[RMDB]
RNA sequence: GGGAACGACUCGAGUAGAGUCGAAAACGAGAGACUCAAACGGGUACGUCCGGGGUAGGAGUGAAAUCCUGUAAUCCUGGACGGACCACCAAUGGGGAAACCACGUUGAGAGACCGGACCCGACAGUGAUCCAAUAUAUUUUCGAAUAUAUUGGAUCAAAAGAAACAACAACAACAAC
Reactivity to 2A3 in 0.01 (KOAc 150mM, MgCl2 10mM, bicine 150mM(pH8.5), 24C), signal-to-noise 9, nucleotides 027 to 126: c020g010a020g010a010g050a140c000u010c020a050a070a040c040g020g000g010u030a010c000g000u000c000c000g000g000g000g010u040a010g000g020a020g010u070g110a050a050a060u010c000c000u030g100u140a060a050u030c000c000u000g000g000a000c000g010g010a000c000c010a050c010c040a070a130u140g000g000g020g080a030a060a090c020c010a080c020g010u010u040g050a050g000a010g030a080c020c000g000g040a050c000c000c000g040a040c050a060g110u060
Reactivity to DMS in 0.01 (KOAc 150mM, MgCl2 10mM, bicine 150mM(pH8.5), 24C), signal-to-noise 7, nucleotides 027 to 126: c050g000a120g010a180g000a110c000u000c000a030a040a110c140g000g000g010u000a040c000g010u000c000c010g000g010g020g030u010a010g010g000a020g010u000g040a130a120a140u000c000c000u010g020u030a110a030u010c000c010u000g020g010a020c000g000g000a020c000c020a050c130c130a080a150u010g000g010g000g000a100a080a130c050c020a100c040g020u000u000g010a070g000a060g000a160c100c000g000g000a130c000c010c010g010a060c240a090g010u030